[RMDB]
RNA sequence: GGGAACGACUCGAGUAGAGUCGAAAAAAAAGAUAUGGAGAGUCUACCCACCCUGCCAGCGUAUAGACAGCUACAUCGGAAACGAUGUAGCCGAACGCUGGGCAGGAGGACUCUCCUAAGUCAAAAAUCUACCCUAAGAGUUCGCUCUUAGGGUAGAAAAAGAAACAACAACAACAAC
Reactivity to DMS in 0.01 (KOAc 150mM, MgCl2 10mM, bicine 150mM(pH8.5), 24C), signal-to-noise 1, nucleotides 027 to 126: a060a040a110a150g010a110u000a120u000g000g000a030g000a000g030u000c000u000a140c000c110c120a300c080c000c000u000g050c020c000a000g000c000g030u000a270u020a130g000a110c300a200g010c000u000a020c000a020u000c000g020g000a040a050a050c010g000a000u000g020u010a010g000c000c020g050a060a000c060g020c000u000g030g020g020c000a000g000g000a030g020g020a030c000u000c000u020c000c000u000a000a100g000u100c000a050a200a070a140a090